[RMDB]
RNA sequence: GGGAACGACUCGAGUAGAGUCGAAAAUCUAACUCAUUCGUGAGUUAGAGUGAGCGCAGCGACCAUUGGGCCGGUGGCGCGCUGUCGGUGCCGCGCGUGGCGAUAGUGCUUGCUUCGGCAAGCACAAACACGACUAAAAAUUCGUUUUUAGUCGUGUAAAAGAAACAACAACAACAAC
Reactivity to 2A3 in 0.01 (KOAc 150mM, MgCl2 10mM, bicine 150mM(pH8.5), 24C), signal-to-noise 7, nucleotides 027 to 126: u000c000u000a000a000c000u010c010a030u080u080c190g110u030g020a000g000u000u000a000g000a010g020u110g070a060g030c050g000c020a060g000c020g040a060c010c010a050u050u100g050g060g010c030c020g040g010u030g020g040c090g000c020g000c060u030g050u070c040g030g060u070g040c010c010g040c010g010c040g050u050g030g010c020g020a050u120a090g010u010g010c000u000u010g000c000u020u010c100g070g000c000a000a000g000c000a000c000a000a000
Reactivity to DMS in 0.01 (KOAc 150mM, MgCl2 10mM, bicine 150mM(pH8.5), 24C), signal-to-noise 9, nucleotides 027 to 126: u000c000u000a000a010c000u000c000a030u000u010c190g020u000g010a020g000u000u000a000g000a020g010u000g000a100g020c040g020c010a070g020c020g000a090c020c020a110u000u000g010g010g010c080c050g010g020u000g000g010c030g010c030g010c020u000g010u000c050g010g010u000g010c030c020g010c090g020c070g020u000g000g010c040g010a090u010a090g020u000g000c000u000u000g000c010u000u010c180g010g010c000a010a000g000c000a010c010a020a090